[RMDB]
RNA sequence: GGGAACGACUCGAGUAGAGUCGAAAAAAUUGGAGUGGUGCAUGCCGAGCAUCAGUGAGCUCGUAAAUCCAGCUGAAACAAACCAACUGCGAACGACGAACGUUUCGCCCUCGCCGCUUAAACACCGGUGAGCGUCUCAACGGCAGGCCGAUGGGCCGAUAGUACAAGCGUUCGCGCUUGUACUAUCAAAAGAAACAACAACAACAAC
Reactivity to 2A3 in 0.01 (KOAc 150mM, MgCl2 10mM, bicine 150mM(pH8.5), 24C), signal-to-noise 4, nucleotides 027 to 156: a010a020u130u100g050g000a040g040u040g010g010u020g020c010a020u100g020c010c030g000a010g000c000a040u030c010a000g050u050g070a020g000c030u020c080g080u090a040a060a060u040c040c010a010g010c030u070g060a080a050a050c050a060a040a080c070c020a050a060c070u090g000c010g040a050a010c010g110a010c040g060a180a040c040g030u030u090u050c000g010c000c010c000u010c000g000c000c000g000c020u020u060a030a040a000c020a000c030c000g000g000u010g000a000g010c030g060u000c030u020c050a080a060c020g040g000c040a030g010g000c010c010g120a120u120g020g010g020c030c020
Reactivity to DMS in 0.01 (KOAc 150mM, MgCl2 10mM, bicine 150mM(pH8.5), 24C), signal-to-noise 2, nucleotides 027 to 156: a030a070u010u010g020g000a080g010u000g000g000u000g060c010a090u010g000c190c000g000a090g000c020a020u000c020a110g010u000g000a090g010c010u000c030g070u000a040a070a110u020c050c000a090g020c030u030g020a130a060a170c130a100a090a110c060c030a070a060c040u000g020c010g020a020a030c020g020a090c020g020a070a070c030g030u000u000u000c020g000c030c020c010u000c010g010c010c010g000c010u000u000a150a080a130c110a070c180c010g020g040u000g010a030g010c020g000u000c040u010c040a020a070c040g030g010c000a060g020g010c020c010g000a120u000g000g000g010c000c010
Record summary: This 207-nucleotide RNA was probed chemically with 2A3 and DMS. For 2A3 the reverse transcriptase was SuperScript II with manganese. Reactivities are given for positions 27 through 156. The RNA was probed in 150 mM KOAc, 10 mM MgCl2 and 150 mM bicine (pH 8.5) at 24 C. For 2A3, 3,918 sequencing reads were counted.